[RMDB]
RNA sequence: GGGAACGACUCGAGUAGAGUCGAAAAAUAAUUCAGAAAGAGAAAACGGCGGGCAAAUUCCACGCACUGCCAUUUAUGCCCCAUGUAUUCAUCGUCGAUGUAGCUACGAAAAGCUGCGUCGUCGUCGACGAUGACGCGAGUUCGCUCGCGUCAUCGUAAAAGAAACAACAACAACAAC
Reactivity to 2A3 in 0.01 (KOAc 150mM, MgCl2 10mM, bicine 150mM(pH8.5), 24C), signal-to-noise 2, nucleotides 027 to 126: a000u200a040a050u100u100c020a010g260a180a190a000g210a040g060a010a110a030a100c050g060g040c000g010g030g000c040a010a030a140u130u010c050c000a030c000g060c000a120c030u020g080c000c000a010u040u080u020a110u120g010c000c000c020c000a070u220g070u070a140u060u060c140a030u050c000g000u000c010g000a000u000g010u000a000g000c020u080a100c150g130a140a120a000a060g000c020u030g000c000g000u000c000g000u000c010g010u020c060g060
Reactivity to DMS in 0.01 (KOAc 150mM, MgCl2 10mM, bicine 150mM(pH8.5), 24C), signal-to-noise 1, nucleotides 027 to 126: a070u040a080a210u010u020c050a010g000a080a080a100g010a230g000a030a020a170a100c140g000g110c010g020g030g000c000a140a010a050u050u000c100c020a060c070g010c100a050c010u020g010c020c020a040u010u060u070a050u090g000c020c050c010c120a060u000g000u030a090u010u000c080a100u000c020g010u000c020g020a000u000g030u000a000g050c000u000a070c240g000a060a130a030a030g000c000u000g000c000g030u010c000g020u000c070g000u000c180g010
Overview: The record gives the reactivity of an RNA of 177 nucleotides to 2A3 and DMS. DMS adducts were read by reverse transcription with MarathonRT. The 2A3 profile rests on 740 reads.